[RMDB]
RNA sequence: GGGAACGACUCGAGUAGAGUCGAAAAGAUAUGGACCCGAGCGAUAAGCUCCUAUCGGAAACGAUAGAGAGCUUUUGACGCUCGGUCCUAAGUCAAAUCAAUAGAGGGCUUCGGCCCUCUAUUGAAACUUAACCCCGUAGUUCGCUACGGGGUUAAGAAAAGAAACAACAACAACAAC
Reactivity to DMS in 0.01 (KOAc 150mM, MgCl2 10mM, bicine 150mM(pH8.5), 24C), signal-to-noise 1, nucleotides 027 to 126: g000a020u010a070u000g000g000a030c040c120c060g030a010g020c000g020a040u010a010a000g030c000u000c000c000u000a000u000c000g010g010a030a010a070c000g010a000u000a000g000a110g000a010g020c000u000u000u000u000g020a300c020g000c000u000c010g000g010u000c020c000u000a000a060g000u000c030a090a100a160u000c000a020a010u000a000g010a020g010g010g000c000u000u000c210g040g010c000c000c000u000c000u000a000u000u000g000a010a050a110

Chemical mapping of a 177-nucleotide RNA with DMS.
For DMS, 1,061 sequencing reads were counted.
It was measured as part of the RMDB library TTRDEL.
Conditions: 150 mM KOAc, 10 mM MgCl2 and 150 mM bicine (pH 8.5), 24 C.